[RMDB]
RNA sequence: GGGAACGACUCGAGUAGAGUCGAAAAUAAUAUUUUUUUUUUCAACACCAUUGUUUGAGUGAGCAUCGAAAAGAUGUGUGGUCUCAUUCGUAAACAGAAACCAGUGUAAUUCUGAAGCCACAUUUGACAUAGGUAUGCAGUUCGCUGCAUACCUAUGAAAAGAAACAACAACAACAAC
Reactivity to 2A3 in 0.01 (KOAc 150mM, MgCl2 10mM, bicine 150mM(pH8.5), 24C), signal-to-noise 3, nucleotides 027 to 126: u080a000a030u080a230u090u080u020u030u010u010u000u000u020u100c070a100a120c070a060c050c080a120u100u150g030u040u040u090g000a020g000u010g010a000g020c000a010u000c030g120a140a080a120a160g020a010u010g030u080g010u050g040g020u020c000u000c000a010u020u000c040g110u150a170a020a030c020a030g110a030a060a020c050c020a050g010u020g050u110a050a080u080u050c000u010g050a070a010g050c010c000a050c050a080u000u000u080g080a050
Reactivity to DMS in 0.01 (KOAc 150mM, MgCl2 10mM, bicine 150mM(pH8.5), 24C), signal-to-noise 2, nucleotides 027 to 126: u010a030a080u000a010u000u000u000u000u000u000u000u000u000u000c010a170a010c060a080c050c060a110u050u030g000u010u030u010g000a090g030u010g000a060g000c020a000u000c010g020a130a040a050a050g000a000u010g000u000g010u000g000g000u000c020u010c020a010u000u030c060g000u050a090a050a030c120a100g000a050a030a090c150c160a060g000u010g000u010a050a070u020u020c050u010g010a080a120g020c020c000a010c070a110u000u010u040g000a140
Conditions: 150 mM KOAc, 10 mM MgCl2 and 150 mM bicine (pH 8.5), 24 C.
An RNA of 177 nucleotides, treated with 2A3 and DMS and read out base by base.
For DMS, 3,338 sequencing reads were counted.
For 2A3 the reverse transcriptase was SuperScript II with manganese.